[RMDB]
RNA sequence: GGGAACGACUCGAGUAGAGUCGAAAACGGGAGUAAUCCAGAUGACGGUCCUGCCAUGAGACCGCAACGAGAGCAUGUCGCAUCGAAUGGACUCGGGGAGUCGGCAGCUUGCCCCACGGAUGAGCGCAUAAGACAGCCCCGUUCGCGGGGCUGUCAACAAUUCUGUUCUGUUCGCAGAACAGAAUUGAAAAGAAACAACAACAACAAC
Reactivity to 2A3 in 0.01 (KOAc 150mM, MgCl2 10mM, bicine 150mM(pH8.5), 24C), signal-to-noise 1, nucleotides 027 to 156: c020g040g000g070a020g040u120a050a080u060c060c000a030g040a100u090g060a080c000g030g000u040c010c000u030g090c060c030a080u080g030a040g000a060c000c020g000c030a020a020c030g060a020g000a010g080c070a070u050g040u130c050g010c020a030u020c030g060a010a060u050g010g070a030c020u010c100g000g010g030g000a000g030u020c020g050g020c000a020g010c040u050u100g010c020c000c010c020a010c040g050g000a100u050g020a020g040c090g000c070a030u050a200a040g000a010c000a010g060c010c040c030c040g020u050u060c100g010c000g060g010g000g000c000u000g000u000c000a000a000
This 207-nucleotide RNA was probed chemically with 2A3.
The RNA was probed in 150 mM KOAc, 10 mM MgCl2 and 150 mM bicine (pH 8.5) at 24 C.
2A3 adducts were read by reverse transcription with SuperScript II with manganese.
The 2A3 profile rests on 1,038 reads.